[RMDB]
RNA sequence: GGGAACGACUCGAGUAGAGUCGAAAAUGAUACCUGACAUAUAUAUACUGGCGAACCAAUUAUUAUAUAUUCAGCACUUUUUAUAUCUUCAUAUAUGUCAAUCAUAUCGUCUUUAAAUGCACAAGUAACCCUAUAAAUAGUUCGCUAUUUAUAGGGUAAAAGAAACAACAACAACAAC
Reactivity to 2A3 in 0.01 (KOAc 150mM, MgCl2 10mM, bicine 150mM(pH8.5), 24C), signal-to-noise 8, nucleotides 027 to 126: u090g010a020u040a090c020c030u010g010a000c020a010u020a000u000a000u020a010u020a110c100u040g020g000c010g020a040a020c020c010a050a030u090u050a090u290u020a040u110a050u020a030u150u080c030a020g060c020a080c040u050u120u040u170u060a120u090a060u170c060u160u080c050a010u030a010u010a010u060g010u010c010a010a050u040c020a010u030a040u090c040g070u010c060u030u180u070a140a220a120u180g040c080a030c010a090a080g040u040a070
Reactivity to DMS in 0.01 (KOAc 150mM, MgCl2 10mM, bicine 150mM(pH8.5), 24C), signal-to-noise 3, nucleotides 027 to 126: u040g000a070u000a030c130c060u000g010a040c000a000u010a020u000a010u000a100u030a080c120u010g000g000c020g000a060a030c040c040a040a150u000u030a060u060u050a060u040a060u020a050u000u000c030a040g010c060a060c070u000u000u030u020u010a030u000a060u030c050u020u010c110a020u020a040u000a020u000g010u010c030a050a030u000c150a170u010a050u000c020g010u010c060u000u010u010a030a040a060u040g030c160a090c090a050a100g010u020a100

This 177-nucleotide RNA was probed chemically with 2A3 and DMS. The RNA was probed in 150 mM KOAc, 10 mM MgCl2 and 150 mM bicine (pH 8.5) at 24 C. The data come from the RNA Mapping Database (RMDB), library OK1LIB. The DMS profile rests on 5,424 reads.